[RMDB]
RNA sequence: GGGAACGACUCGAGUAGAGUCGAAAAGAUAUGGAUCGAACUACAGCUCUGUGAUGUGGCGAAGAACGCACUAACGUCGGAAACGACGUUAGUGCGGGAGCCAUGCAUGGGCUGCGAUCCUAAGUCACAUCAUAUUGAUCUUCGGAUCAAUAUGAUGAAAAGAAACAACAACAACAAC
Reactivity to DMS in 0.01 (KOAc 150mM, MgCl2 10mM, bicine 150mM(pH8.5), 24C), signal-to-noise 3, nucleotides 027 to 126: g030a050u010a300u010g010g010a010u000c010g000a070a060c110u020a300c010a020g010c000u000c000u010g060u000g000a140u020g030u000g000g020c000g000a150a180g030a120a230c010g000c000a010c000u000a000a020c000g010u020c010g040g000a060a090a300c000g060a020c000g040u000u000a000g040u000g010c000g000g000g000a120g030c010c000a000u000g020c010a030u000g010g020g010c000u000g000c010g010a030u000c000c000u010a030a100g000u010c020a240
Reactivity to 2A3 in 0.01 (KOAc 150mM, MgCl2 10mM, bicine 150mM(pH8.5), 24C), signal-to-noise 3, nucleotides 027 to 126: g010a020u090a060u230g000g000a010u040c030g010a090a120c160u280a100c300a010g020c020u040c050u300g140u070g250a300u110g080u020g070g000c030g010a240a050g040a110a050c020g000c020a000c040u030a000a020c010g000u030c030g090g120a160a080a100c020g040a020c000g000u000u020a020g000u000g010c000g010g010g010a000g000c010c000a010u010g020c010a040u080g030g020g000c000u000g010c000g000a000u020c000c000u020a200a050g040u020c010a020